The data come from the RNA Mapping Database (RMDB), library OK1LIB. Chemical mapping of a 177-nucleotide RNA with DMS and 2A3. The DMS profile rests on 14,505 reads. DMS adducts were read by reverse transcription with MarathonRT. The reactions ran in a buffer of 150 mM KOAc, 10 mM MgCl2 and 150 mM bicine (pH 8.5), at 24 C. For 2A3, 2,280 sequencing reads were counted.
[RMDB]
RNA sequence: GGGAACGACUCGAGUAGAGUCGAAAACGUCUUUGCGUGGAAGGACAGGUCGAGACGUCGCGAGUCCUUUUUGUUUGUGUCUGCAUGGGAGAAUCUCGGUGCCACAUAGUUGGGAGGUCCGAUACGGCGAUAAAAAUUCAUUCGUGAAUUUUUAUCGAAAAGAAACAACAACAACAAC
Reactivity to DMS in 0.01 (KOAc 150mM, MgCl2 10mM, bicine 150mM(pH8.5), 24C), signal-to-noise 5, nucleotides 027 to 126: c060g000u000c020u000u000u010g010c030g020u020g010g020a110a110g010g010a050c070a090g000g020u010c060g010a060g010a060c120g010u010c050g030c060g010a140g000u010c010c020u010u010u020u000u000g020u030u000u010g030u010g000u010c030u010g010c040a030u010g010g010g000a080g010a080a090u010c030u010c010g020g010u000g000c020c040a030c080a040u030a080g010u000u000g000g000g000a080g000g000u000c020c030g010a070u020a050c110g000g000
Reactivity to 2A3 in 0.01 (KOAc 150mM, MgCl2 10mM, bicine 150mM(pH8.5), 24C), signal-to-noise 2, nucleotides 027 to 126: c030g020u020c020u000u000u100g020c020g020u040g040g010a060a030g050g010a040c030a020g040g040u010c000g000a010g010a050c020g050u000c000g000c000g030a000g010u040c000c000u010u000u000u000u110g120u040u040u050g040u020g030u010c030u020g030c010a020u010g010g000g030a060g060a080a040u010c030u000c030g030g000u020g040c000c000a040c000a020u100a030g070u100u050g020g010g020a040g000g020u000c000c000g010a010u010a080c060g020g020